[RMDB]
RNA sequence: GGGAACGACUCGAGUAGAGUCGAAAAGGGAAUAAUGCAGGGUGAACAGACUGAUCUUGUUUCUGCGGAAAUGUUAGUUACAGUCAUUUCGGCGAUGAGAUCAGCCUGUCGAACCCAGCUCGCGGACCCUUACUUCUAUCUUCGGAUAGAAGUAAGGAAAAGAAACAACAACAACAAC
Reactivity to 2A3 in 0.01 (KOAc 150mM, MgCl2 10mM, bicine 150mM(pH8.5), 24C), signal-to-noise 6, nucleotides 027 to 126: g040g020g040a080a110u140a160a060u290g010c040a030g010g010g020u030g030a030a000c000a000g010a000c000u010g010a010u010c000u030u030g050u070u140u070c140u210g010c040g010g030a000a010a000u030g010u100u130a110g060u120u160a120c120a110g070u020c010a050u010u010u000c020g170g000c000g010a010u030g000a010g000a000u000c000a010g010c010c000u020g010u030c020g010a010a010c000c000c010a010g000c010u020c050g170c050g040g070a080c000
Reactivity to DMS in 0.01 (KOAc 150mM, MgCl2 10mM, bicine 150mM(pH8.5), 24C), signal-to-noise 4, nucleotides 027 to 126: g010g020g010a190a090u010a100a060u000g020c010a040g010g010g030u000g000a160a020c000a020g000a030c010u010g000a020u010c010u000u010g000u000u000u010c100u020g040c010g000g010a000a000a010u000g010u000u010a100g010u010u010a130c280a140g010u010c000a010u000u000u000c000g040g040c010g000a020u000g010a010g000a010u000c010a000g000c000c010u000g010u000c050g010a130a080c020c000c000a060g010c020u010c140g010c090g010g000a190c140

The record gives the reactivity of an RNA of 177 nucleotides to 2A3 and DMS.
2A3 adducts were read by reverse transcription with SuperScript II with manganese.
DMS adducts were read by reverse transcription with MarathonRT.